[RMDB]
RNA sequence: GGGAACGACUCGAGUAGAGUCGAAAAGAUAUGGAGAAGGACAUCGAUCAAAUCGUAACAUCUAUCGGAAACGAUAGUGGAUUUGGGAGUCCCUGCUCCUAAGUCAAAACGUCUCUUCGGAGACGAACAAUGCACGAGUGUUCGCACUCGUGCAUUGAAAAGAAACAACAACAACAAC
Reactivity to DMS in 0.01 (KOAc 150mM, MgCl2 10mM, bicine 150mM(pH8.5), 24C), signal-to-noise 3, nucleotides 027 to 126: g000a050u000a300u010g000g000a050g000a190a080g010g020a040c020a180u010c100g000a180u000c000a000a010a010u000c000g020u000a060a140c190a010u010c010u000a000u000c000g000g010a130a090a130c010g010a010u000a010g020u000g010g000a020u000u000u000g010g010g000a110g010u000c060c010c030u010g010c010u000c000c000u000a030a080g000u010c030a090a050a120a080c050g010u000c000u000c000u000u000c200g070g000a020g030a010c000g000a030a080
Reactivity to 2A3 in 0.01 (KOAc 150mM, MgCl2 10mM, bicine 150mM(pH8.5), 24C), signal-to-noise 2, nucleotides 027 to 126: g010a020u080a040u170g000g000a020g010a030a040g000g020a020c040a300u170c080g160a110u090c030a010a010a010u030c030g100u080a060a030c030a190u160c010u010a000u000c000g010g060a090a030a040c020g010a010u000a010g010u020g060g020a000u030u020u000g030g030g020a010g020u020c030c030c020u090g120c010u020c000c000u010a110a000g050u040c020a000a000a150a180c020g020u000c010u000c000u000u090c300g190g000a000g010a000c000g000a040a010